Description:
Chemical mapping of a 177-nucleotide RNA with DMS and 2A3. The DMS profile rests on 30,271 reads. Values cover nucleotides 27 to 126. Conditions: 150 mM KOAc, 10 mM MgCl2 and 150 mM bicine (pH 8.5), 24 C. For DMS the reverse transcriptase was MarathonRT.

RNA sequence: GGGAACGACUCGAGUAGAGUCGAAAAUGGCGCUGCUUCUGAUAUCGUGCGAUGGACGUUAUCCUUCUUGUUUGUCCACGGAAAAGCCGGGUUUGAAGAGCGAAACACCUUGGUCUUCGCUUCACUGUCACAACUAUGUUUUCGAACAUAGUUGUGAAAAAGAAACAACAACAACAAC
Reactivity to DMS in 0.01 (KOAc 150mM, MgCl2 10mM, bicine 150mM(pH8.5), 24C), signal-to-noise 9, nucleotides 027 to 126: u010g010g010c030g010c030u000g010c030u000u010c050u010g000a120u000a070u010c030g020u000g010c100g020a070u000g000g010a040c030g010u010u000a110u010c090c090u010u000c100u000u010g010u000u000u000g010u000c020c020a040c060g010g000a070a070a080a120g010c030c030g010g000g010u000u000u000g010a090a120g000a060g010c030g000a040a040a060c110a070c090c080u000u000g020g010u000c080u000u000c030g010c020u000u000c080a090c160u000g010
Reactivity to 2A3 in 0.01 (KOAc 150mM, MgCl2 10mM, bicine 150mM(pH8.5), 24C), signal-to-noise 6, nucleotides 027 to 126: u080g040g000c040g010c050u080g020c010u050u030c030u070g060a050u040a040u200c020g010u030g040c090g050a030u030g020g010a010c040g020u070u060a100u200c020c040u070u080c060u090u150g050u050u050u060g030u000c000c010a010c000g030g020a090a090a010a000g020c030c020g020g030g000u040u030u050g100a110a060g020a000g030c020g020a000a010a010c050a030c020c060u030u100g070g010u040c040u030u030c030g010c000u080u100c050a060c100u120g030